[RMDB]
RNA sequence: GGGAACGACUCGAGUAGAGUCGAAAAAACGGGGCUAGCGAGUGGAUGUUCCUCCCCCCGAAGGUCCCGAGUGAGGCUUAUCCCGGGGAUCGGCCUCUGUCCCUCCAUGGUGAGCUCCAGGACCCCCCCAAUGUCUAAUGUUCGCAUUAGACAUUGGAAAAGAAACAACAACAACAAC
Reactivity to DMS in 0.01 (KOAc 150mM, MgCl2 10mM, bicine 150mM(pH8.5), 24C), signal-to-noise 3, nucleotides 027 to 126: a050a080c030g000g000g010g020c020u010a070g030c030g000a030g020u010g010g000a110u010g010u010u000c090c020u000c020c000c000c010c010c010g000a070a040g020g000u010c000c000c040g010a120g010u000g010a030g010g000c020u000u000a070u010c010c000c180g010g020g020g020a030u000c050g000g020c010c000u010c000u010g020u000c010c010c010u010c060c080a110u000g000g010u010g010a090g010c070u000c010c040a090g000g000a200c010c000c010c010c020

This 177-nucleotide RNA was probed chemically with DMS. It was measured as part of the RMDB library VIROID. The reactions ran in a buffer of 150 mM KOAc, 10 mM MgCl2 and 150 mM bicine (pH 8.5), at 24 C.